Conditions: 150 mM KOAc, 10 mM MgCl2 and 150 mM bicine (pH 8.5), 24 C. The record gives the reactivity of an RNA of 177 nucleotides to DMS and 2A3. For 2A3, 2,141 sequencing reads were counted. For DMS the reverse transcriptase was MarathonRT. For DMS, 1,579 sequencing reads were counted. It was measured as part of the RMDB library OK2TST. For 2A3 the reverse transcriptase was SuperScript II with manganese.

[RMDB]
RNA sequence: GGGAACGACUCGAGUAGAGUCGAAAACGACGUUCUUUGCCUCUAUAUCCAAGAGGAGUCAUUUCAAGAGCGUACUGAGGCUGCGGUGCACGCACUGCACACCAGCUCGAUGACAGCAGCAGAGACCUCGUCCUGCUAUGUUCGCAUAGCAGGACGAAAAAGAAACAACAACAACAAC
Reactivity to DMS in 0.01 (KOAc 150mM, MgCl2 10mM, bicine 150mM(pH8.5), 24C), signal-to-noise 3, nucleotides 027 to 126: c120g030a090c040g030u000u000c020u000u000u000g010c010c000u000c020u000a120u020a170u000c170c240a130a060g000a030g000g000a080g000u040c160a070u000u000u000c130a050a060g000a050g010c020g010u010a080c120u010g010a100g010g000c060u000g020c210g010g030u000g000c030a040c260g010c200a160c080u000g010c020a030c030a080c070c000a070g000c050u000c060g000a080u000g010a040c030a040g040c090a050g010c020a010g000a070g000a070c070c040
Reactivity to 2A3 in 0.01 (KOAc 150mM, MgCl2 10mM, bicine 150mM(pH8.5), 24C), signal-to-noise 2, nucleotides 027 to 126: c050g030a000c020g040u040u010c020u070u110u060g040c000c000u000c000u030a130u020a060u300c090c020a080a030g010a060g060g030a010g040u060c030a100u060u170u170c100a070a010g010a000g000c000g000u010a100c070u080g070a040g050g010c030u030g010c100g030g000u010g020c020a010c120g080c060a040c040u020g000c010a020c000a060c000c010a030g030c030u020c010g030a030u080g040a000c010a020g000c000a010g020c000a000g020a000g000a120c000c030